[RMDB]
RNA sequence: GGGAACGACUCGAGUAGAGUCGAAAAAGCUGUCUCCCAGACAGCAGGGCUCUGCCUGACCUCAGGCCACAGCCACACCAGGGCUGCUCAGGUCCCUAUCCCUGCUCCAGAUCUGGAGACAGAGGAGGAUGGUUCUGUGAUUCGUCACAGAACCAUCAAAAGAAACAACAACAACAAC
Reactivity to DMS in 0.01 (KOAc 150mM, MgCl2 10mM, bicine 150mM(pH8.5), 24C), signal-to-noise 2, nucleotides 027 to 126: a130g030c000u000g000u010c000u010c110c030c130a080g000a020c050a010g030c000a010g010g000g000c170u000c070u000g000c110c060u030g010a090c060c100u000c200a030g000g000c080c200a200c020a030g000c010c010a110c100a180c140c230a120g000g000g000c010u000g000c050u000c100a040g000g030u010c040c200c010u010a060u020c010c000c000u000g000c000u000c150c140a150g030a090u020c040u000g000g010a020g000a030c000a010g000a100g010g000a110g010
Reactivity to 2A3 in 0.01 (KOAc 150mM, MgCl2 10mM, bicine 150mM(pH8.5), 24C), signal-to-noise 2, nucleotides 027 to 126: a000g130c010u010g050u000c010u090c060c060c000a000g010a010c010a000g000c010a010g040g000g000c010u050c040u130g050c030c050u090g030a070c000c030u070c060a040g060g000c050c030a060c020a030g030c040c010a070c010a030c000c060a080g000g080g000c000u050g000c000u040c060a010g040g000u020c040c020c000u170a160u280c010c000c000u010g030c020u100c040c010a080g020a300u050c040u020g000g000a010g010a000c010a010g030a000g040g010a040g060